This 177-nucleotide RNA was probed chemically with 2A3 and DMS. Reactivities are given for positions 27 through 126. It was measured as part of the RMDB library TTRDEL. For DMS the reverse transcriptase was MarathonRT. The DMS profile rests on 1,325 reads.
RNA sequence: GGGAACGACUCGAGUAGAGUCGAAAAGAUAUGGAUGGUAACAUGUGGUGGAGUACCCAUUCGGAAACGAAUGUGUACGAUGAAACCGAAUUACCAUCCUAAGUCAAAACAGGUCUUCGGACCUGAAGUCACGUUAUCACUUCGGUGAUAACGUGACAAAAGAAACAACAACAACAAC
Reactivity to 2A3 in 0.01 (KOAc 150mM, MgCl2 10mM, bicine 150mM(pH8.5), 24C), signal-to-noise 2, nucleotides 027 to 126: g000a000u050a030u070g010g010a010u000g020g000u050a080a030c060a140u220g190u300g180g050u070g080g060a030g000u020a000c000c010c010a010u000u000c000g050g020a010a020a030c000g000a020a020u010g010u010g020u000a000c020g130a250u050g010a080a010a020c000c000g010a010a070u110u010a000c000c000a000u000c000c000u000a000a000g000u010c000a000a010a070a110c010a000g000g000u000c000u030u130c300g140g010a020c000c000u000g050a080a000
Reactivity to DMS in 0.01 (KOAc 150mM, MgCl2 10mM, bicine 150mM(pH8.5), 24C), signal-to-noise 2, nucleotides 027 to 126: g010a010u000a160u000g000g000a000u000g010g000u000a000a040c270a160u010g000u000g010g030u020g000g000a040g010u000a000c000c020c000a020u020u000c000g000g000a050a030a180c000g030a010a000u000g010u010g000u000a000c010g010a100u020g010a080a150a040c010c010g030a190a220u000u000a010c000c000a000u000c000c000u000a010a060g000u000c000a060a060a100a190c010a000g010g020u010c000u000u000c200g000g000a000c000c000u000g000a020a090